[RMDB]
RNA sequence: GGGAACGACUCGAGUAGAGUCGAAAACUCUUGCACAGAAUCACCUUUCUAUAAUAACCAGUGCAAGAAGGGUUAUUAUACCAUUUAAUGUGCCGAGGGCACGCGGAGUACGAUCGAGGGUACAGCAAAAACGUGAAGUACUUCGGUACUUCACGAACACACCCACAGAGUUCGCUCUGUGGGUGUGAAAAGAAACAACAACAACAAC
Reactivity to 2A3 in 0.01 (KOAc 150mM, MgCl2 10mM, bicine 150mM(pH8.5), 24C), signal-to-noise 2, nucleotides 027 to 156: c010u010c000u000u000g000c010a010c000a000g010a040a100u060c010a170c040c000u050u160u140c130u170a030u010a050a010u000a000a000c000c000a000g000u020g000c000a000a000g010a000a000g010g000g000u010u000a000u010u000a000u010a030c000c010a100u050u140u200a220a060u270g010u020g050c020c020g050a100g040g070g000c040a000c050g000c020g050g000a080g010u110a020c050g050a170u250c060g010a100g030g100g000u040a020c030a070g060c050a060a110a030a050a020c010g010u020g020a000a000g010u010a000c000u020u030c190g010g000u010a000c010u010u000c000a000c000g000a000a000
Structure probing data (2A3) for a 207-nucleotide construct. Conditions: 150 mM KOAc, 10 mM MgCl2 and 150 mM bicine (pH 8.5), 24 C. The 2A3 profile rests on 761 reads. 2A3 adducts were read by reverse transcription with SuperScript II with manganese. Source: RMDB library M2RFOK, as collected in RNAgym.